RNA sequence: GGGAACGACUCGAGUAGAGUCGAAAAACGGUGCGGAAGUUCGCGCUUCCGUGAAACGCGAAAAUCGGACGGUGGCUGCAAGUCGCAUCGCAAAACCGCGUCAAGUGGAGUUAGCGAGAGGAGGCUGAAACCAUCCAACACUUCGGUGUUGGAUGAACUAAUGCAUUACUUUCGAGUAAUGCAUUAGAAAAGAAACAACAACAACAAC
Reactivity to DMS in 0.01 (KOAc 150mM, MgCl2 10mM, bicine 150mM(pH8.5), 24C), signal-to-noise 4, nucleotides 027 to 156: a060c030g000g030u000g000c010g030g000a060a090g040u000u000c180g010c220g010c020u000u010c010c080g000u000g010a050a040a030c020g010c020g000a050a040a090a090u000c040g010g010a090c020g020g020u010g020g020c010u000g020c040a050a120g020u000c030g010c040a200u010c020g030c000a060a050a080a140c020c010g040c030g020u010c100a070a140g020u000g000g000a120g000u000u000a110g000c030g000a070g000a120g020g000a050g000g000c030u000g010a100a060a130c100c000a030u000c000c000a000a010c000a010c010u000u000c260g040g020u000g030u000u000g010g010a010u000g000a030a090
Reactivity to 2A3 in 0.01 (KOAc 150mM, MgCl2 10mM, bicine 150mM(pH8.5), 24C), signal-to-noise 7, nucleotides 027 to 156: a000c030g010g010u070g010c010g010g020a030a020g040u100u120c060g030c020g000c060u030u010c010c000g000u020g030a100a070a000c080g020c020g050a040a030a010a110u120c040g020g010a010c020g020g020u020g020g000c040u080g010c070a050a020g020u030c010g000c030a040u020c010g000c030a040a050a020a030c010c010g020c010g070u120c150a140a080g020u040g070g000a050g020u060u080a020g030c020g030a020g010a030g070g030a010g020g000c030u020g040a070a020a000c040c000a000u000c010c000a000a000c000a000c000u050u090c230g080g000u000g000u000u010g000g000a000u000g000a000a000